[RMDB]
RNA sequence: GGGAACGACUCGAGUAGAGUCGAAAAGAUAUGGAGACAAAUCAGGUUCAGUAAGACGCGACGUAACAUCCUUCGGAAACGAAGGUGGUCGAACUACGUUAUCUGAACCUGAUUUGUCUCCUAAGUCCACAGUAUAGUGGUUCGCCACUAUACUGUGAAAAGAAACAACAACAACAAC
Reactivity to DMS in 0.01 (KOAc 150mM, MgCl2 10mM, bicine 150mM(pH8.5), 24C), signal-to-noise 6, nucleotides 027 to 126: g000a090u010a300u000g000g000a000g010a020c000a000a010a000u000c010a010g000g010u000u010c000a020g010u010a150a280g000a020c020g000c030g000a040c010g020u000a020a030c230a030u010c010c000u000u000c000g010g000a110a100a230c010g020a000a000g020g020u000g010g000u000c010g000a070a060c170u020a300c030g010u010u000a280u000c000u000g000a000a010c000c000u000g000a000u000u000u000g000u000c000u000c000c000u000a010a070g020u010c040
This 177-nucleotide RNA was probed chemically with DMS. Source: RMDB library TTRINS, as collected in RNAgym. The reactions ran in a buffer of 150 mM KOAc, 10 mM MgCl2 and 150 mM bicine (pH 8.5), at 24 C. Values cover nucleotides 27 to 126.